[RMDB]
RNA sequence: GGGAACGACUCGAGUAGAGUCGAAAAGAUAUGGAGGAGAACUGCGCAGAAUAGCUCGGAAACGAGCACAUUCUGAACUACGCAUCCCUCCUCCUAAGUCAAAGUUGCGGUGUUCGCACCGCAACAAGGUCUUGUUAAGGUUCGCCUUAACAAGACCAAAAGAAACAACAACAACAAC
Reactivity to 2A3 in 0.01 (KOAc 150mM, MgCl2 10mM, bicine 150mM(pH8.5), 24C), signal-to-noise 2, nucleotides 027 to 126: g000a000u060a060u160g010g000a000g020g010a020g000a110a020c040u010g000c030g080c000a010g000a010a010u020a020g000c000u010c010g060g040a070a080a060c010g020a010g000c020a030c020a020u000u010c000u030g010a050a070c110u130a040c010g000c010a020u020c060c000c000u000c010c000u040c020c000u010a100a020g080u010c080a130a030a100g010u000u010g000c010g020g000u010g000u020u120c300g020c070a000c000c000g000c010a020a000c000a000a020
Reactivity to DMS in 0.01 (KOAc 150mM, MgCl2 10mM, bicine 150mM(pH8.5), 24C), signal-to-noise 2, nucleotides 027 to 126: g000a040u000a300u000g020g000a030g040g000a040g020a090a110c300u000g010c020g000c000a020g020a010a000u010a180g010c000u000c000g040g000a130a100a240c000g030a010g010c000a010c300a050u010u010c010u010g000a090a050c050u010a300c010g010c000a010u010c150c050c020u000c000c000u020c000c010u000a020a190g000u010c070a130a090a120g010u000u000g000c000g010g010u010g010u010u010c200g000c000a010c020c020g000c000a000a000c010a030a100